[RMDB]
The record gives the reactivity of an RNA of 207 nucleotides to 2A3. The reactions ran in a buffer of 150 mM KOAc, 10 mM MgCl2 and 150 mM bicine (pH 8.5), at 24 C. The 2A3 profile rests on 1,034 reads.
RNA sequence: GGGAACGACUCGAGUAGAGUCGAAAACCCAAGUUCGAGAUGGGCCAUCUCCGGGCGAGGAGUCGCGGGGGAAGCGAUCACCGCCCGAUAGGGGAUUCAAGGUAAAGAGCAUUGGAACGCCGAGGGGAAGUACUCCCAAGAAGGAAAAGGGAGGUUCGACAUGAGUGUUGUUCGCAACACUCAUGUCAAAAGAAACAACAACAACAAC
Reactivity to 2A3 in 0.01 (KOAc 150mM, MgCl2 10mM, bicine 150mM(pH8.5), 24C), signal-to-noise 2, nucleotides 027 to 156: c010c020c010a020a020g110u100u180c070g040a050g010a160u120g070g010g000c070c000a030u020c030u000c050c000g010g010g000c020g020a110g020g030a030g100u050c000g000c040g030g030g000g030g070a010a020g010c000g020a000u040c030a040c040c000g030c000c000c000g000a030u100a070g030g020g040g010a020u070u090c150a070a080g030g010u080a050a050a050g050a010g000c040a060u080u120g030g010a140a010c070g010c090c060g060a040g010g050g000g000a020a010g000u020a110c020u020c090c010c000a020a040g080a050a030g050g040a000a040a010a030g000g020g010a020g000g050u070u280c080